[RMDB]
RNA sequence: GGGAACGACUCGAGUAGAGUCGAAAAGUAUGGAUGCCACCGUGACGGCUCAAUCACACAAGUGCCAACGAUAACGAGGCGCUCGCUAUUGCUGCGAAACUGACGGCCUGACGGUCUGACGUUACAAAAAACGAAAAGUGGUUCGCCACUUUUCGAAGGUGUUAACAUACUUCGGUAUGUUAACACCAAAAGAAACAACAACAACAAC
Reactivity to 2A3 in 0.01 (KOAc 150mM, MgCl2 10mM, bicine 150mM(pH8.5), 24C), signal-to-noise 4, nucleotides 027 to 156: g080u070a040u150g060g020a080u090g020c020c010a020c010c010g020u040g080a060c080g000g000c020u040c070a040a090u070c010a030c020a020c010a130a070g020u020g020c010c010a110a070c110g070a150u130a210a100c090g020a060g020g010c010g020c040u030c000g010c020u050a060u200u300g060c090u050g000c030g020a090a040a030c030u040g020a020c020g010g020c000c010u040g060a020c040g010g000u000c030u010g010a020c020g010u050u050a010c050a010a110a020a030a030a020c010g010a000a000a000a000g000u010g030g000u030u040c100g040c020c000a000c000u010u000u000u010c010g010a040a020
Reactivity to DMS in 0.01 (KOAc 150mM, MgCl2 10mM, bicine 150mM(pH8.5), 24C), signal-to-noise 2, nucleotides 027 to 156: g020u000a070u000g030g000a140u010g010c000c020a230c060c040g010u010g010a180c070g000g020c000u010c060a100a070u030c040a120c100a090c180a040a110g060u000g060c000c000a120a090c030g000a160u020a060a040c000g000a140g060g000c040g030c030u010c030g050c060u000a060u000u000g010c030u000g030c010g020a070a080a060c060u020g010a250c090g000g000c030c040u010g030a120c190g010g000u000c040u010g000a230c080g000u000u010a130c040a000a050a080a080a100a080c000g020a020a010a010a020g000u020g010g000u000u000c300g000c020c000a010c000u000u000u000u010c010g000a030a070
Structure probing data (2A3 and DMS) for a 207-nucleotide construct.
It was measured as part of the RMDB library M2RFPK.
Values cover nucleotides 27 to 156.
The reactions ran in a buffer of 150 mM KOAc, 10 mM MgCl2 and 150 mM bicine (pH 8.5), at 24 C.